[RMDB]
RNA sequence: GGGAACGACUCGAGUAGAGUCGAAAAGCAAGUCGCAUCGCAAAACCGCGGCAAGUGGAGUUAGCGAGAGGAGGCUGGAUUUUGGCUUCCUUAAGCAAUCGGUCACCGAGAAGGUGUGGUCGUUACCUAGACAGUUUUCUGUUCGCAGAAAACUGAAUGGUGUAAGUAUAUUCGUAUACUUACACCAAAAAGAAACAACAACAACAAC
Reactivity to DMS in 0.01 (KOAc 150mM, MgCl2 10mM, bicine 150mM(pH8.5), 24C), signal-to-noise 4, nucleotides 027 to 156: g040c050a050a160g030u000c040g040c000a110u000c070g030c090a070a080a070a190c070c110g000c030g010g010c040a080a140g030u020g010g010a160g020u000u000a170g020c010g010a300g000a040g020g010a050g010g000c020u010g030g020a210u000u000u010u010g020g010c000u020u010c020c010u010u000a000a300g010c010a070a070u000c050g000g020u010c040a200c000c010g000a140g020a100a120g000g010u000g010u000g010g010u000c010g010u010u000a040c040c020u000a150g000a190c000a000g000u000u000u000u000c000u010g000u000u000c260g070c030a020g000a010a000a010a010c000u000g000a010a070
Reactivity to 2A3 in 0.01 (KOAc 150mM, MgCl2 10mM, bicine 150mM(pH8.5), 24C), signal-to-noise 6, nucleotides 027 to 156: g050c040a070a030g010u030c020g020c030a050u060c030g050c160a080a080a050a040c080c060g010c010g050g030c060a090a050g020u040g030g070a100g050u120u170a030g030c010g010a030g000a010g030g000a000g010g010c000u050g100g170a300u110u090u140u300g020g000c000u010u000c000c000u010u000a030a000g000c000a010a060u060c020g010g040u050c010a010c020c030g030a070g060a160a060g050g010u070g020u040g050g000u000c010g010u020u040a180c000c000u030a070g060a110c010a000g000u000u000u000u010c000u000g040u040u050c140g000c070a000g000a000a000a000a010c000u010g000a010a070
Source information
Chemical mapping of a 207-nucleotide RNA with DMS and 2A3. DMS adducts were read by reverse transcription with MarathonRT. For 2A3 the reverse transcriptase was SuperScript II with manganese. Conditions: 150 mM KOAc, 10 mM MgCl2 and 150 mM bicine (pH 8.5), 24 C. High DMS reactivity at an A or C suggests that its Watson-Crick edge is free. Source: RMDB library M2RFPK, as collected in RNAgym.